Structure probing data (DMS and 2A3) for a 207-nucleotide construct. For 2A3 the reverse transcriptase was SuperScript II with manganese. The data come from the RNA Mapping Database (RMDB), library OK3TST.
[RMDB]
RNA sequence: GGGAACGACUCGAGUAGAGUCGAAAAGUGUACGUGUACGAGAGAGUACACGUUCACACUCACACGUGAGUGAGUGAUCUCUCUCGUUCGUGUACGUACGUACUCUCUCACGUGAGUGAGAGUUCGUGAGUACGUGAUCACACGAGUUCGUGAGAACGAGUUUUCAUAUCUUCGGAUAUGAAAACUCAAAAGAAACAACAACAACAAC
Reactivity to DMS in 0.01 (KOAc 150mM, MgCl2 10mM, bicine 150mM(pH8.5), 24C), signal-to-noise 5, nucleotides 027 to 156: g020u000g010u000a020c020g020u000g030u000a020c020g000a200g020a190g010a150g020u000a060c020a020c020g010u000u000c030a090c000a060c010u000c020a020c030a150c250g030u000g020a160g030u000g000a050g000u010g000a110u000c010u000c010u000c010u000c020g020u000u000c050g030u000g020u000a040c040g000u000a010c000g010u000a030c010u000c000u000c010u000c000a020c000g000u000g010a300g000u000g010a030g010a050g010u000u010c160g030u000g000a060g010u000a000c010g010u000g000a110u000c110a050c020a040c030g010a090g010u000u000c050g000u000g010a140g010a070a130c160
Reactivity to 2A3 in 0.01 (KOAc 150mM, MgCl2 10mM, bicine 150mM(pH8.5), 24C), signal-to-noise 9, nucleotides 027 to 156: g060u040g000u010a000c010g000u000g000u010a010c030g010a020g040a030g010a020g300u030a000c000a000c000g010u030u040c000a010c000a010c000u010c000a030c000a010c100g300u160g130a140g010u010g010a020g000u030g130a190u030c020u000c000u000c000u000c030g020u040u000c010g000u000g010u020a030c070g010u010a000c000g010u020a010c010u030c000u000c000u000c030a010c030g100u120g110a110g010u000g000a000g020a020g010u020u190c110g050u070g050a020g000u000a000c000g000u020g040a100u120c050a010c000a010c020g010a020g050u120u130c040g010u050g030a030g020a060a040c090